[RMDB]
RNA sequence: GGGAACGACUCGAGUAGAGUCGAAAAGUGGCAUACUUCGGUAUGCCACAAACCAGACCCUAUCUGGAACACGCUCUACAGCGUGAUCCCAAGUAGAUCCCAAAAGUCGUGGGUUCGCCCACGACAACAUUAGUCAGAGCUUCGGCUCUGACUAAUGAAAAGAAACAACAACAACAAC
Reactivity to DMS in 0.01 (KOAc 150mM, MgCl2 10mM, bicine 150mM(pH8.5), 24C), signal-to-noise 3, nucleotides 027 to 126: g000u000g020g020c000a000u000a000c000u000u010c180g050g000u010a000u000g000c000c000a000c000a010a060a080c100c140a150g000a090c120c060c040u010a050u000c060u010g000g000a060a110c010a010c010g020c000u000c210u000a130c190a070g000c000g010u000g010a070u000c020c010c060a050a040g000u000a050g010a130u000c000c000c010a110a080a110a050g010u000c010g030u000g000g000g030u000u010c160g020c000c000c000a000c000g010a000c000a030a040
Reactivity to 2A3 in 0.01 (KOAc 150mM, MgCl2 10mM, bicine 150mM(pH8.5), 24C), signal-to-noise 4, nucleotides 027 to 126: g000u000g000g020c010a000u010a020c020u020u060c190g070g000u000a000u020g030c000c010a000c010a000a000a000c020c010a010g070a020c030c010c010u040a050u050c030u020g000g020a020a030c010a000c010g040c010u080c100u300a130c180a040g000c010g000u010g010a060u020c010c010c000a070a030g010u020a010g030a130u030c040c020c000a040a160a030a050g000u000c000g000u000g010g020g000u010u020c280g070c000c000c000a000c000g000a000c010a000a010